[RMDB]
Source information:
An RNA of 177 nucleotides, treated with DMS and 2A3 and read out base by base. The RNA was probed in 150 mM KOAc, 10 mM MgCl2 and 150 mM bicine (pH 8.5) at 24 C.
RNA sequence: GGGAACGACUCGAGUAGAGUCGAAAAUAUACAAAGAUCUGUAUCCAUUUCUGAAAUGUUUUCGCUGUCAGAUAACUCUGCAUCUUCUUCGUUAUCAACAUAUGGAUUGAAAGCAUCAUAGAAUCAAAUGACUAUACUGCUUCGGCAGUAUAGUCAUAAAAGAAACAACAACAACAAC
Reactivity to DMS in 0.01 (KOAc 150mM, MgCl2 10mM, bicine 150mM(pH8.5), 24C), signal-to-noise 2, nucleotides 027 to 126: u090a050u030a000c090a060a150a090g000a080u020c040u000g000u000a050u000c030c070a070u010u000u000c030u000g000a110a040a020u010g040u000u010u000u000c030g010c030u020g020u000c130a100g030a080u000a020a060c050u000c050u030g000c080a060u010c060u000u020c060u010u000c070g010u000u010a030u000c060a120a090c110a060u000a130u000g000g030a080u010u000g030a080a040a080g030c050a020u010c060a190u050a080g000a030a020u040c190a050a070
Reactivity to 2A3 in 0.01 (KOAc 150mM, MgCl2 10mM, bicine 150mM(pH8.5), 24C), signal-to-noise 5, nucleotides 027 to 126: u180a000u000a010c020a020a130a040g070a140u060c050u100g020u050a050u050c020c030a020u010u080u050c020u080g030a050a080a110u050g020u010u040u010u010c030g020c050u070g080u090c030a030g010a030u040a110a020c010u040c020u160g050c040a200u030c070u210u020c010u060u090c030g040u040u030a100u080c040a030a060c030a020u150a060u270g020g080a090u060u140g070a020a030a010g050c030a000u050c010a020u040a100g060a070a080u040c030a030a260